[RMDB]
RNA sequence: GGGAACGACUCGAGUAGAGUCGAAAAGCCUCUAGCGUUUGCAAAACGCUCUUUGCGCAAUGAUCUGGAUUUAGCGCAAGUAGGUCCGAAAUCCAGAUCAACAUUUCGGACAACCGCGCUAAUUAAAUAAACUUCUUCUUUUCGAAGAAGAAGUUUAAAAAGAAACAACAACAACAAC
Reactivity to DMS in 0.01 (KOAc 150mM, MgCl2 10mM, bicine 150mM(pH8.5), 24C), signal-to-noise 5, nucleotides 027 to 126: g010c010c010u000c110u000a030g010c010g020u000u010u010g010c250a110a070a040a030c030g020c010u000c050u000u000u000g010c070g010c030a110a120u010g000a070u000c020u000g010g000a080u000u000u000a030g000c020g020c010a050a090g000u010a080g020g020u000c020c000g020a020a010a020u000c090c070a120g010a110u010c120a070a070c190a060u000u000u000c010g010g000a010c020a090a070c130c170g000c030g020c020u000a020a040u010u010a030a090a130
Reactivity to 2A3 in 0.01 (KOAc 150mM, MgCl2 10mM, bicine 150mM(pH8.5), 24C), signal-to-noise 2, nucleotides 027 to 126: g050c000c020u000c080u030a000g000c000g030u020u030u230g170c010a020a160a000a180c040g000c000u020c050u110u140u050g030c070g000c030a060a150u100g010a110u070c060u120g080g000a040u010u050u110a020g000c010g000c010a010a020g070u120a030g170g000u040c000c000g010a030a000a000u010c020c030a050g030a060u060c010a000a020c000a020u060u050u030c020g000g010a000c010a050a030c060c040g020c020g030c050u030a070a120u220u140a080a100a110
Structure probing data (DMS and 2A3) for a 177-nucleotide construct. Source: RMDB library M2PK90, as collected in RNAgym. DMS adducts were read by reverse transcription with MarathonRT.